[RMDB]
RNA sequence: GGGAACGACUCGAGUAGAGUCGAAAACAUGUUUCUCCCAUUGAGAAACAUCCUAGCAUUUAAGGCCUCUUAAUGUAAGAUAAGCCGGGUACUAUCUCUUUUACUUCUCUCUCUACUAUCUUCUUUGCAACCCAAUGUGGUUCGCCACAUUGGGUUGAAAAGAAACAACAACAACAAC
Reactivity to 2A3 in 0.01 (KOAc 150mM, MgCl2 10mM, bicine 150mM(pH8.5), 24C), signal-to-noise 4, nucleotides 027 to 126: c030a010u040g000u000u010u030c020u000c090c090c060a210u150u300g020a000g000a000a000a000c020a010u020c010c000u020a040g040c050a080u000u040u210a080a040g020g030c000c020u050c020u100u060a070a050u220g070u110a020a060g020a090u030a060a030g030c010c000g000g010g030u030a060c030u010a050u030c020u020c000u050u070u020u090a110c080u090u030c020u000c000u010c000u000c000u040a080c000u010a070u140c090u030u020c000u020u060u030g020